[RMDB]
An RNA of 177 nucleotides, treated with 2A3 and DMS and read out base by base. High DMS reactivity at an A or C suggests that its Watson-Crick edge is free. 2A3 adducts were read by reverse transcription with SuperScript II with manganese. For DMS, 1,626 sequencing reads were counted. The reactions ran in a buffer of 150 mM KOAc, 10 mM MgCl2 and 150 mM bicine (pH 8.5), at 24 C. For 2A3, 512 sequencing reads were counted.
RNA sequence: GGGAACGACUCGAGUAGAGUCGAAAAAUAUACAAGAACGUUGGGAAAAGCGAUUCGCUUUACGAAUCGCAGAGCACGACGAAUCCAUUCUUGUACUUAAAACCAGGUUUGAUCAGGUAUGGAAUUGCUCAGCUUGCAAAUUCGUUUGCAAGCUGAGAAAAGAAACAACAACAACAAC
Reactivity to 2A3 in 0.01 (KOAc 150mM, MgCl2 10mM, bicine 150mM(pH8.5), 24C), signal-to-noise 2, nucleotides 027 to 126: a000u230a010u020a000c010a000a000g000a100a000c000g000u000u020g050g010g030a000a120a000a000g000c040g040a000u000u000c000g010c060u040u150u290a090c080g000a010a000u040c000g000c000a010g020a000g000c160a110c140g000a010c030g080a030a100u120c040c000a000u010u010c000u000u000g010u060a040c010u050u170a020a100a060a040c010c000a110g210g000u030u110u010g060a150u050c000a000g010g180u090a290u150g080g160a070a050u190u070g000
Reactivity to DMS in 0.01 (KOAc 150mM, MgCl2 10mM, bicine 150mM(pH8.5), 24C), signal-to-noise 2, nucleotides 027 to 126: a060u040a180u060a000c020a000a020g000a030a090c010g060u010u010g000g000g000a050a060a150a240g000c010g020a000u000u000c030g000c300u020u070u020a110c000g000a040a000u010c000g000c020a030g020a090g010c150a010c000g000a080c000g000a090a070u000c090c100a300u000u000c000u000u000g020u000a000c190u000u000a080a020a090a080c000c020a180g000g000u000u020u000g000a070u010c190a070g010g000u010a050u000g000g030a180a150u010u010g020